[RMDB]
Structure probing data (DMS and 2A3) for a 177-nucleotide construct. For DMS the reverse transcriptase was MarathonRT. The RNA was probed in 150 mM KOAc, 10 mM MgCl2 and 150 mM bicine (pH 8.5) at 24 C. 2A3 adducts were read by reverse transcription with SuperScript II with manganese. It was measured as part of the RMDB library OK2TRN. The DMS profile rests on 1,592 reads. The 2A3 profile rests on 906 reads. Values cover nucleotides 27 to 126.

RNA sequence: GGGAACGACUCGAGUAGAGUCGAAAAAGCCGAAGGGACUAGAGUAUUAGACCAGGCUGGGCAGCCAAUACAUGUGCUCACCUUGGGGCUGGCAGAUGAAUAUCCCCUGCAUGAGACACCGAUGACACUUGGUAGAUCCAUUCGUGGAUCUACCAAGAAAAGAAACAACAACAACAAC
Reactivity to DMS in 0.01 (KOAc 150mM, MgCl2 10mM, bicine 150mM(pH8.5), 24C), signal-to-noise 2, nucleotides 027 to 126: a040g030c010c030g010a100a050g000g000g010a110c100u020a090g030a140g020u000a110u000u000a030g000a130c050c010a130g000g000c080u000g010g000g010c030a060g000c090c070a110a100u000a100c150a120u010g000u000g010c010u010c040a070c110c020u010u010g030g000g000g000c050u000g010g030c040a070g010a090u000g030a070a060u020a140u020c020c020c040c030u000g020c030a070u010g000a080g000a080c070a030c070c060g030a100u000g000a080c140a100
Reactivity to 2A3 in 0.01 (KOAc 150mM, MgCl2 10mM, bicine 150mM(pH8.5), 24C), signal-to-noise 1, nucleotides 027 to 126: a000g000c050c020g000a070a050g070g000g010a010c020u100a080g010a000g190u090a190u190u110a040g010a040c010c030a020g070g000c050u010g020g030g100c060a050g000c000c050a000a020u290a100c110a080u130g040u090g040c010u020c030a030c010c010u050u040g060g000g060g040c040u000g000g010c020a020g040a140u090g130a110a030u100a050u200c000c000c020c020u020g000c040a060u040g020a050g020a050c040a040c040c060g100a090u120g050a050c030a020